About this RNA: The record gives the reactivity of an RNA of 207 nucleotides to 2A3. The RNA was probed in 150 mM KOAc, 10 mM MgCl2 and 150 mM bicine (pH 8.5) at 24 C. It was measured as part of the RMDB library ARCHII.

RNA sequence: GGGAACGACUCGAGUAGAGUCGAAAAAUGUAAGAACCAUAGCAUUUCGCGAUUCAUUGGUAAAUCAAUUUUGAUUCUCUAUUAACCAAUAAUGUGGAACUAUUAACAUGGUUAAAACAAACUGUUUGAAGUCUAGACGCAGCAUGGUACUCUUUCUAUUUCAGUCAACGUUCGCGUUGACUGAAAUAAAAGAAACAACAACAACAAC
Reactivity to 2A3 in 0.01 (KOAc 150mM, MgCl2 10mM, bicine 150mM(pH8.5), 24C), signal-to-noise 1, nucleotides 027 to 156: a010u060g030u100a060a110g040a140a020c000c000a000u020a030g010c050a040u010u080u050c120g000c040g120a050u040u100c000a000u000u070g020g040u100a070a000a100u020c070a090a140u100u200u100u130g050a040u110u000c090u000c000u060a130u110u090a050a000c000c000a020a010u070a060a000u090g000u090g020g110a030a020c010u040a100u240u110a100a070c060a010u020g000g040u000u010a050a120a050a000c080a030a030a010c050u040g000u070u050u190g060a050a000g000u050c040u100a020g000a070c030g000c010a000g060c000a010u010g010g010u050a050c000u010c010u050u000u000c110u000

Source information: The 2A3 profile rests on 414 reads.